[RMDB]
An RNA of 207 nucleotides, treated with DMS and 2A3 and read out base by base.
The 2A3 profile rests on 597 reads.
Values cover nucleotides 27 to 156.
It was measured as part of the RMDB library M2RFPK.
2A3 is a SHAPE reagent: it acylates the 2'-hydroxyl of flexible nucleotides of all four kinds.
2A3 adducts were read by reverse transcription with SuperScript II with manganese.
RNA sequence: GGGAACGACUCGAGUAGAGUCGAAAAACGAAAACUACGCACUCGCAGCUUAAUAACCUGCGCUGAGCCCUUCUCCCCCAGCUUGCCUUUGUCCUAGGGAAUUGGAAGGUCAUCCUUCACAGGAUCGUCUAGGUAAUCCCUUUCGAGGGAUUACCAAUCUAGGUUCUGUAUUCGUACAGAACCUAGAAAAAGAAACAACAACAACAAC
Reactivity to DMS in 0.01 (KOAc 150mM, MgCl2 10mM, bicine 150mM(pH8.5), 24C), signal-to-noise 2, nucleotides 027 to 156: a100c050g000a040a070a050a070c060u000a030c030g010c030a090c040u000c040g060c040a040g020c010u000u010a110a110u000a110a100c230c010u000g030c050g020c110u010g020a140g000c000c040c040u000u000c030u010c030c010c010c030c010a060g000c030u000u020g020c020c020u000u000u000g010u000c000c020u010a070g020g020g030a070a060u000u020g020g000a080a070g020g000u020c070a100u000c030c000u000u000c090a100c180a070g000g000a020u000c050g010u000c070u000a140g020g010u000a010a020u000c000c000c000u000u000u000c300g000a020g020g040g020a030u000u000a000c020c020a000a050
Reactivity to 2A3 in 0.01 (KOAc 150mM, MgCl2 10mM, bicine 150mM(pH8.5), 24C), signal-to-noise 1, nucleotides 027 to 156: a010c080g030a050a000a000a090c090u200a060c140g000c020a040c030u030c010g000c000a000g000c000u060u010a030a010u060a100a060c010c000u040g030c030g060c150u020g010a030g010c030c000c030u060u000c050u140c020c040c000c000c010a000g000c000u100u140g040c030c000u120u090u040g040u100c000c080u060a040g060g000g050a080a030u070u020g010g000a040a020g030g030u030c030a020u040c010c000u070u130c090a040c000a070g000g000a000u070c060g060u050c120u030a030g030g000u000a000a000u010c000c000c010u020u010u020c060g090a000g000g000g000a000u000u000a000c000c000a010a000